This 177-nucleotide RNA was probed chemically with 2A3 and DMS. Source: RMDB library RFM100, as collected in RNAgym. For 2A3 the reverse transcriptase was SuperScript II with manganese. The reactions ran in a buffer of 150 mM KOAc, 10 mM MgCl2 and 150 mM bicine (pH 8.5), at 24 C. Reactivities are given for positions 27 through 126. 2A3 is a SHAPE reagent: it acylates the 2'-hydroxyl of flexible nucleotides of all four kinds.
RNA sequence: GGGAACGACUCGAGUAGAGUCGAAAAGGGAAAACAGCCCAGGAAGCCCCCACUGGCCGGCGCCCAUGCCAGCUCUCUUCUGGCCAGGACGCAGCUGCUGCGCACUUCGCGCGGGGGCCCACGGCAGCGUCCGCAAACAAUUCGUUGUUUGCGGACGAAAAGAAACAACAACAACAAC
Reactivity to 2A3 in 0.01 (KOAc 150mM, MgCl2 10mM, bicine 150mM(pH8.5), 24C), signal-to-noise 2, nucleotides 027 to 126: g060g000g010a080a070a000a020c010a030g020c010c010c000a020g040g060a030a030g010c000c000c000c000c000a040c130u100g040g000c020c020g120g000c000g000c010c000c000a010u080g000c000c010a030g000c050u110c040u040c000u210u040c000u000g000g000c000c020a030g020g000a010c010g000c000a070g040c030u050g040c020u050g000c020g010c030a030c130u290u180c200g010c030g000c000g010g000g000g010g000c000c000c000a030c000g020g000c000a030g050
Reactivity to DMS in 0.01 (KOAc 150mM, MgCl2 10mM, bicine 150mM(pH8.5), 24C), signal-to-noise 1, nucleotides 027 to 126: g070g000g000a070a050a050a090c070a120g000c060c000c020a120g070g000a220a280g010c040c020c010c000c010a080c070u000g000g010c000c040g000g000c010g000c050c050c000a130u010g000c010c020a000g050c250u000c120u020c080u000u050c020u000g010g010c010c260a090g000g030a000c010g010c000a150g060c010u010g000c070u020g000c000g000c010a080c300u000u040c160g010c000g070c010g000g000g000g060g010c000c000c010a110c110g000g010c080a090g040